An RNA of 177 nucleotides, treated with 2A3 and DMS and read out base by base. For DMS, 991 sequencing reads were counted. For DMS the reverse transcriptase was MarathonRT. The RNA was probed in 150 mM KOAc, 10 mM MgCl2 and 150 mM bicine (pH 8.5) at 24 C.
RNA sequence: GGGAACGACUCGAGUAGAGUCGAAAAUUGGAGCGCUGAAGUUGCAACGCAGCCAACGAGAGCGCCAUGCCGAUAUUGGUGCCAUCCCCAUGCUCCAUCAACCAGACAUCGUCAAGACGCUGGGCGACGCCAGUUGGAAUUUCGAUUCCAACUGGCGAAAAGAAACAACAACAACAAC
Reactivity to 2A3 in 0.01 (KOAc 150mM, MgCl2 10mM, bicine 150mM(pH8.5), 24C), signal-to-noise 2, nucleotides 027 to 126: u070u020g020g000a040g010c010g000c090u050g070a080a070g000u060u030g000c030a080a070c140g020c150a010g080c060c020a010a000c030g030a000g010a020g160c010g000c030c000a010u040g030c020c070g140a130u040a080u130u070g020g000u040g060c060c010a050u090c040c000c000c000a040u050g000c010u010c010c010a050u060c000a050a140c000c010a010g120a180c020a080u040c030g080u000c010a040a100g040a000c020g030c040u030g000g000g000c030g020a020
Reactivity to DMS in 0.01 (KOAc 150mM, MgCl2 10mM, bicine 150mM(pH8.5), 24C), signal-to-noise 2, nucleotides 027 to 126: u000u020g030g040a100g040c030g000c110u000g000a150a220g000u000u010g020c060a070a120c160g000c060a160g020c050c090a040a070c050g000a200g000a060g030c000g000c000c020a060u000g000c090c020g020a150u000a040u000u000g000g010u000g000c000c070a130u000c020c020c000c130a110u010g010c020u000c040c010a110u000c100a070a220c030c040a010g010a150c110a040u010c080g000u000c240a060a150g030a010c150g010c000u000g010g010g040c150g000a060